[RMDB]
RNA sequence: GGGAACGACUCGAGUAGAGUCGAAAAGAUAUGGACCCUAUAAUCGCGAGGAUCUACUUCGGAAACGAAGUAGGGAGCGGAUAUACAUGGGUCCUAAGUCAAAAGACCUAAUCUUCGGAUUAGGUCAUCAACACGGAUAGUUCGCUAUCCGUGUUGAAAAAGAAACAACAACAACAAC
Reactivity to 2A3 in 0.01 (KOAc 150mM, MgCl2 10mM, bicine 150mM(pH8.5), 24C), signal-to-noise 2, nucleotides 027 to 126: g020a010u040a010u070g010g010a010c000c010c020u040a070u060a120a190u240c030g000c010g030a300g140g000a010u000c000u000a000c010u000u000c010g000g010a020a010a020c020g000a000a000g020u010a000g000g000g000a000g000c030g040g050a000u060a000u030a160c290a190u250g000g000g000u000c010c000u030a020a010g010u010c030a000a000a160a170g000a000c000c000u000a010a000u000c020u050u140c300g170g000a000u000u000a000g000g000u000c010a010
Reactivity to DMS in 0.01 (KOAc 150mM, MgCl2 10mM, bicine 150mM(pH8.5), 24C), signal-to-noise 3, nucleotides 027 to 126: g010a010u000a200u000g010g000a020c000c000c010u000a070u000a060a050u000c030g030c000g010a080g030g010a050u000c020u000a000c000u000u010c000g000g000a060a030a110c010g020a020a010g000u020a000g020g000g000a030g020c010g000g010a050u000a040u010a090c300a170u010g000g000g020u010c000c000u010a000a070g000u000c030a060a080a180a170g010a020c000c000u020a000a010u000c000u000u010c300g020g000a010u000u000a010g010g000u000c000a000